[RMDB]
RNA sequence: GGGAACGACUCGAGUAGAGUCGAAAAGGAGGCUAUGGCUCUGAACUUUAAGUUAAUAGGUAUUGGCGGUACACCUUGUAUAAAGGUUGCUGCUAUGCAGUCUAAACUUACAGAUCUUAAAUGCACACGGCCCGUAGGUUCGCCUACGGGAAAAGAAACAACAACAACAAC
Reactivity to 2A3 in 0.01 (KOAc 150mM, MgCl2 10mM, bicine 150mM(pH8.5), 24C), signal-to-noise 9, nucleotides 027 to 129: g060g030a060g020g000c020u060a030u100g040g000c000u000c020u020g030a060a070c020u050u060u040a010a000g000u010u080a110a040u050a150g030g030u040a060u080u170g000g000c010g000g000u010a020c040a020c160c000u000u000g090u070a170u240a190a030a000g000g000u000u010g000c000u000g000c000u000a020u020g010c010a020g020u020c030u090a100a070a020c000u000u010a010c020a020g020a020u010c010u050u120a090a120a070u140g010c030a030c000a010c120g110g010
Reactivity to DMS in 0.01 (KOAc 150mM, MgCl2 10mM, bicine 150mM(pH8.5), 24C), signal-to-noise 8, nucleotides 027 to 129: g000g000a090g000g020c040u030a070u040g000g000c060u020c040u030g030a050a050c080u000u010u000a040a010g010u000u000a070a080u040a060g000g000u040a030u030u050g050g000c020g000g000u000a030c210a030c050c010u000u050g060u090a120u070a040a020a000g020g030u020u010g000c000u020g000c020u000a020u000g000c030a070g030u040c070u030a050a050a020c000u000u000a000c070a030g020a050u020c010u020u030a040a040a100u050g040c030a070c070a070c120g020g020